Annotation:
The data come from the RNA Mapping Database (RMDB), library OK2TRN. Chemical mapping of a 177-nucleotide RNA with 2A3 and DMS. For DMS, 12,259 sequencing reads were counted.

RNA sequence: GGGAACGACUCGAGUAGAGUCGAAAAUGAACUCACUGCUGAAGCUCCUGUGGGUAGAUCAUUCCUGGGGCCUCAGAUGUGUGGUCAAGGCAGCGUUCAUCCCCACAAAUACUGCCUGGCUGUGGGAUAAACAGCCAUAGUUCGCUAUGGCUGUUUAAAAAGAAACAACAACAACAAC
Reactivity to 2A3 in 0.01 (KOAc 150mM, MgCl2 10mM, bicine 150mM(pH8.5), 24C), signal-to-noise 2, nucleotides 027 to 126: u050g010a000a000c010u010c050a000c020u210g010c000u010g020a010a000g010c010u020c020c030u050g040u300g040g000g040u040a090g060a300u150c040a040u080u020c010c030u010g000g000g000g000c000c010u030c010a000g030a120u090g030u010g000u030g040g000u030c020a060a060g010g000c020a010g010c020g070u050u030c030a100u130c030c010c030c000a030c040a010a140a010u190a060c010u030g000c010c010u000g000g000c020u040g020u120g080g060g010a030
Reactivity to DMS in 0.01 (KOAc 150mM, MgCl2 10mM, bicine 150mM(pH8.5), 24C), signal-to-noise 6, nucleotides 027 to 126: u000g010a070a080c040u010c030a040c020u010g010c000u000g010a030a040g010c000u000c010c010u000g010u020g000g000g010u000a060g010a170u010c180a050u000u000c010c000u000g000g000g000g010c010c030u000c000a020g010a080u010g010u000g020u010g010g010u000c050a080a060g010g000c010a010g000c070g020u010u000c040a140u000c060c000c000c080a080c160a070a060a070u010a090c020u000g010c020c010u000g000g020c050u000g020u000g000g000g010a270